RNA sequence: GGGAACGACUCGAGUAGAGUCGAAAACGUUACCCAUUUCUAGGACAAUAGUCCCAAUUGUGCCUUGCCUAGGACGCAUGUUAGUAUAUGACAUGGGGCAGUUUCACUCCUUUUAAAGUUCAGGUGUGAUGUUUAUCUAAAAGGGGAAGGUGGUAAAAUGCGUAUUAUUAUUCGUAAUAAUACGCAUAAAAGAAACAACAACAACAAC
Reactivity to 2A3 in 0.01 (KOAc 150mM, MgCl2 10mM, bicine 150mM(pH8.5), 24C), signal-to-noise 7, nucleotides 027 to 156: c040g030u050u070a130c020c000c000a010u070u130u050c100u090a050g020g030a030c020a070a130u040a120g050u020c010c010c000a030a070u040u080g040u100g100c000c010u020u040g060c000c020u050a050g060g030a040c040g000c080a000u010g000u020u020a060g060u110a190u070a070u300g020a020c020a040u010g040g000g050g000c030a030g010u000u060u060c010a010c020u050c010c000u040u090u030u140a120a160a080g060u140u130c060a020g000g070u010g030u020g060a040u030g040u040u150u040a080u040c040u050a010a050a050a030g030g000g000g020a010a030g020g030u060g010g040u080a070a080a020
Reactivity to DMS in 0.01 (KOAc 150mM, MgCl2 10mM, bicine 150mM(pH8.5), 24C), signal-to-noise 5, nucleotides 027 to 156: c040g010u000u000a200c010c000c020a220u000u010u000c080u000a060g010g010a090c030a110a130u000a130g030u000c010c010c020a100a120u010u010g020u000g000c010c020u000u010g020c050c020u010a130g000g000a070c100g010c010a030u000g000u000u000a060g030u010a170u000a120u000g010a030c020a050u000g010g020g030g010c030a080g000u000u000u000c040a140c020u000c010c010u000u010u000u010a020a080a090g010u000u000c060a090g020g020u000g020u000g010a030u000g010u000u000u000a060u010c060u000a030a020a050a060g000g020g010g010a050a060g010g010u000g010g000u000a040a060a120
An RNA of 207 nucleotides, treated with 2A3 and DMS and read out base by base. Conditions: 150 mM KOAc, 10 mM MgCl2 and 150 mM bicine (pH 8.5), 24 C. For DMS, 20,539 sequencing reads were counted. 2A3 adducts were read by reverse transcription with SuperScript II with manganese. The data come from the RNA Mapping Database (RMDB), library OK3TST.